[RMDB]
RNA sequence: GGGAACGACUCGAGUAGAGUCGAAAAAUGGUAAUGCCACCGGAUGCAAUUGCCUCGGCAAUGACCUUAUCGACCUGAUUAGCGAACUCAUCGCUAAGCGCGUCAAGUUUGCUGAUGAGACCGGGAGUCGCAGAAGUACAUUCGUGUACUUCUGCGAAAAAGAAACAACAACAACAAC
Reactivity to DMS in 0.01 (KOAc 150mM, MgCl2 10mM, bicine 150mM(pH8.5), 24C), signal-to-noise 3, nucleotides 027 to 126: a100u000g010g010u000a030a050u010g000c040c050a100c050c080g010g010a220u010g020c070a130a110u000u000g020c020c050u000c110g010g010c020a060a040u000g000a060c050c050u000u010a090u000c090g020a040c020c010u000g010a030u000u000a020g000c000g000a000a130c190u000c220a130u010c000g000c010u000a050a050g030c110g010c230g030u000c160a090a080g000u000u000u000g010c020u000g020a090u000g010a120g020a110c040c020g000g020g010a200g010
Reactivity to 2A3 in 0.01 (KOAc 150mM, MgCl2 10mM, bicine 150mM(pH8.5), 24C), signal-to-noise 1, nucleotides 027 to 126: a000u090g000g000u000a060a000u050g030c000c030a080c020c000g010g030a110u070g050c040a070a190u080u080g000c010c000u040c020g010g000c000a000a080u180g050a080c010c000u050u060a080u110c080g040a020c010c010u030g050a070u010u000a000g020c020g000a060a020c040u000c210a200u050c050g000c000u050a040a050g060c070g000c000g020u050c040a030a000g010u000u020u000g000c000u000g030a030u050g080a020g070a080c000c000g000g060g000a040g070
An RNA of 177 nucleotides, treated with DMS and 2A3 and read out base by base. For DMS the reverse transcriptase was MarathonRT. 2A3 adducts were read by reverse transcription with SuperScript II with manganese. The data come from the RNA Mapping Database (RMDB), library OK2TRN. The RNA was probed in 150 mM KOAc, 10 mM MgCl2 and 150 mM bicine (pH 8.5) at 24 C.